[RMDB]
Chemical mapping of a 177-nucleotide RNA with 2A3 and DMS. It was measured as part of the RMDB library TTRDES. For 2A3 the reverse transcriptase was SuperScript II with manganese.
RNA sequence: GGGAACGACUCGAGUAGAGUCGAAAAGAUAUGGAGACCUUCCAAGCAACAGCUAUCGGGUCGGAAACGACCCAUAGACAUGCUUGAGAGGUCUCCUAAGUCAAACCAACCGGUUCGCCGGUUGGAAGUAUUAUUGGUACUUCGGUACCAAUAAUACAAAAGAAACAACAACAACAAC
Reactivity to 2A3 in 0.01 (KOAc 150mM, MgCl2 10mM, bicine 150mM(pH8.5), 24C), signal-to-noise 3, nucleotides 027 to 126: g010a010u080a020u140g000g000a010g000a010c000c000u060u020c060c010a020a000g000c000a010a180c050a220g060c010u020a010u150c230g020g000g010u010c010g020g010a060a090a000c000g000a000c010c030c000a000u000a010g030a050c020a060u110g000c000u020u010g040a070g000a000g100g000u000c000u000c000c000u000a010a000g010u010c010a000a020a090c000c000a000a000c000c000g000g080u080u070c300g050c130c000g010g000u000u010g000g000a020a010
Reactivity to DMS in 0.01 (KOAc 150mM, MgCl2 10mM, bicine 150mM(pH8.5), 24C), signal-to-noise 5, nucleotides 027 to 126: g020a060u010a300u010g000g000a000g020a010c000c000u000u000c030c010a000a020g000c000a050a110c300a250g010c010u000a010u000c280g040g020g000u000c000g010g000a060a110a260c000g010a010c000c000c000a010u000a000g000a050c090a230u000g000c000u000u000g000a050g010a010g000g010u000c010u000c000c000u010a010a070g000u010c030a140a140a260c010c000a000a000c020c000g000g000u000u020c230g030c000c000g010g010u000u000g020g010a020a050